This 177-nucleotide RNA was probed chemically with DMS and 2A3.
Conditions: 150 mM KOAc, 10 mM MgCl2 and 150 mM bicine (pH 8.5), 24 C.
DMS (dimethyl sulfate) methylates the pairing face of unpaired adenines and cytosines.
For 2A3 the reverse transcriptase was SuperScript II with manganese.
Values cover nucleotides 27 to 126.
[RMDB]
RNA sequence: GGGAACGACUCGAGUAGAGUCGAAAAGAUAUGGAGCACAUGGAGACCACGUGUCGGAAACGACACGGGUCUAUGAAGUGUGACCCUCCUAAGUCAAAAGACCCAGCAUGUUCGCAUGCUGGGUCAACAGGAUACAUAGGUUCGCCUAUGUAUCCUGAAAAGAAACAACAACAACAAC
Reactivity to DMS in 0.01 (KOAc 150mM, MgCl2 10mM, bicine 150mM(pH8.5), 24C), signal-to-noise 4, nucleotides 027 to 126: g000a020u000a040u010g000g000a060g030c010a000c000a000u000g000g010a030g020a000c000c000a130c010g020u000g000u000c000g010g000a030a020a040c010g010a010c000a000c000g000g000g010u000c000u000a140u010g000a110a190g000u000g000u000g000a170c230c190c020u000c000c000u000a020a100g000u000c040a100a080a160a120g000a010c010c000c000a000g010c000a020u000g000u000u010c220g030c000a010u000g010c000u000g010g010g000u000c000a010a040
Reactivity to 2A3 in 0.01 (KOAc 150mM, MgCl2 10mM, bicine 150mM(pH8.5), 24C), signal-to-noise 3, nucleotides 027 to 126: g000a000u010a000u040g000g000a000g020c000a000c000a000u010g010g000a010g010a020c010c010a300c300g000u000g000u010c010g000g020a020a000a010c010g010a010c000a010c000g000g000g000u000c010u020a140u000g000a010a000g010u010g020u040g080a180c100c010c000u000c000c010u010a030a010g020u000c010a000a050a110a230g000a000c000c020c000a000g020c000a000u020g040u160u180c300g010c190a000u000g000c000u010g000g050g000u000c000a000a000